[RMDB]
Conditions: 150 mM KOAc, 10 mM MgCl2 and 150 mM bicine (pH 8.5), 24 C. An RNA of 177 nucleotides, treated with 2A3 and DMS and read out base by base. Source: RMDB library RFMREP, as collected in RNAgym. For DMS, 3,560 sequencing reads were counted. For 2A3, 1,884 sequencing reads were counted.
RNA sequence: GGGAACGACUCGAGUAGAGUCGAAAAUAGCGGUACAAACUGAGCAGGCGAUGGAUCUUGUGUGAUCAGGUCCGUGGGGCCGGGCCGUUUUCGGCAGCGGAUGCAUGGCAUCCGCGGGACAGUAAAACCUUCUUUUUAAGUUCGCUUAAAAAGAAGGAAAAGAAACAACAACAACAAC
Reactivity to 2A3 in 0.01 (KOAc 150mM, MgCl2 10mM, bicine 150mM(pH8.5), 24C), signal-to-noise 2, nucleotides 027 to 126: u090a000g030c040g030g000u090a040c050a060a150a020c060u060g020a020g020c030a030g030g000c040g070a060u060g070g010a040u000c040u180u160g060u030g040u080g130a070u120c040a000g030g000u000c010c010g010u010g010g040g150g040c080c000g000g020g000c000c020g020u070u020u050u110c000g020g000c010a020g010c000g010g000a000u020g000c140a290u160g130g000c000a000u000c000c010g000c020g000g010g020a010c000a010g020u030a000a000a010a000
Reactivity to DMS in 0.01 (KOAc 150mM, MgCl2 10mM, bicine 150mM(pH8.5), 24C), signal-to-noise 3, nucleotides 027 to 126: u010a110g020c050g000g000u010a100c160a060a070a100c070u010g000a060g000c050a170g010g000c040g010a080u000g010g000a030u000c020u000u000g020u000g010u010g000a090u020c040a060g010g010u000c010c020g020u000g010g000g010g010c050c000g000g000g010c000c010g000u000u000u000u010c020g010g000c030a110g020c000g000g000a030u000g000c030a130u000g010g010c000a010u000c000c010g020c010g000g010g000a080c060a030g010u000a080a070a100a160
Overview:
DMS adducts were read by reverse transcription with MarathonRT. For 2A3 the reverse transcriptase was SuperScript II with manganese.